This 177-nucleotide RNA was probed chemically with DMS and 2A3. The RNA was probed in 150 mM KOAc, 10 mM MgCl2 and 150 mM bicine (pH 8.5) at 24 C. 2A3 adducts were read by reverse transcription with SuperScript II with manganese. For DMS the reverse transcriptase was MarathonRT.
[RMDB]
RNA sequence: GGGAACGACUCGAGUAGAGUCGAAAACUGCAGCGUCACGGCUCGGCGACGAGCAUUGUGACGGUUUCCGUCAACAGCGUAUCGAGAGCCCUUGUGGACGGCACAGCUGGCGGGCACGCCGACCCGCCCUAGUCCCUAUAUUCGUAUAGGGACUAGGAAAAGAAACAACAACAACAAC
Reactivity to DMS in 0.01 (KOAc 150mM, MgCl2 10mM, bicine 150mM(pH8.5), 24C), signal-to-noise 8, nucleotides 027 to 126: c040u000g010c110a110g020c020g000u000c000a010c030g010g000c000u000c000g010g000c300g000a180c030g000a020g000c010a040u030u020g040u010g010a010c000g000g010u010u010u000c010c010g010u000c070a060a090c050a060g000c140g010u010a110u020c070g000a150g010a140g000c020c010c040u010u000g010u010g000g000a050c030g000g000c240a090c060a100g000c090u010g000g000c010g010g000g010c050a070c090g000c070c050g000a110c000c000c000g000c040
Reactivity to 2A3 in 0.01 (KOAc 150mM, MgCl2 10mM, bicine 150mM(pH8.5), 24C), signal-to-noise 9, nucleotides 027 to 126: c050u080g030c050a050g060c000g010u010c000a000c020g020g000c010u000c000g080g020c050g040a070c010g020a030g010c020a080u070u300g010u010g000a000c000g000g000u030u050u020c020c000g030u040c020a050a040c010a070g040c020g070u100a080u180c080g050a050g020a030g130c010c010c030u090u130g060u080g050g020a030c020g020g010c050a020c020a120g040c030u060g020g000c010g000g010g000c070a030c110g070c030c020g080a160c000c000c000g000c000
Notes: The 2A3 profile rests on 39,792 reads.